[RMDB]
Chemical mapping of a 177-nucleotide RNA with 2A3 and DMS. The RNA was probed in 150 mM KOAc, 10 mM MgCl2 and 150 mM bicine (pH 8.5) at 24 C. Reactivities are rounded to 0.1 and cut off at 0 and 3. It was measured as part of the RMDB library OK2TRN.
RNA sequence: GGGAACGACUCGAGUAGAGUCGAAAAGCUAGCGUGUGAUCACUGAUACGUACAGCUAGCAGACAUGUCUAGUAUGACGUACCAUGGCUAGAGUACGGAUCCGCUAGUCUAGCACAUGCGUACUCCAGUAGACCGACAAGUUCGCUUGUCGGUCUACAAAAGAAACAACAACAACAAC
Reactivity to 2A3 in 0.01 (KOAc 150mM, MgCl2 10mM, bicine 150mM(pH8.5), 24C), signal-to-noise 3, nucleotides 027 to 126: g000c000u000a000g000c020g070u020g040u090g070a080u080c050a100c300u110g020a050u130a240c060g020u030a000c020a020g030c010u010a010g000c010a010g030a010c060a070u100g030u040c020u020a120g090u110a250u270g060a040c040g000u010a010c000c010a040u000g010g000c000u000a000g000a020g070u010a010c010g060g100a180u110c090c010g040c160u040a050g120u020c000u010a000g020c030a030c000a230u040g000c060g000u010a020c020u030c020c010a030
Reactivity to DMS in 0.01 (KOAc 150mM, MgCl2 10mM, bicine 150mM(pH8.5), 24C), signal-to-noise 3, nucleotides 027 to 126: g000c000u000a040g000c020g020u010g000u020g000a040u000c050a190c210u010g000a040u010a070c100g000u010a020c030a140g010c010u000a010g010c010a050g010a080c210a050u000g000u010c000u000a130g050u000a090u000g010a060c040g000u000a020c000c010a020u000g010g010c000u000a010g000a040g000u000a040c040g020g000a080u000c120c050g000c230u000a020g000u000c050u000a030g010c040a080c040a020u000g000c150g000u000a040c020u010c020c070a100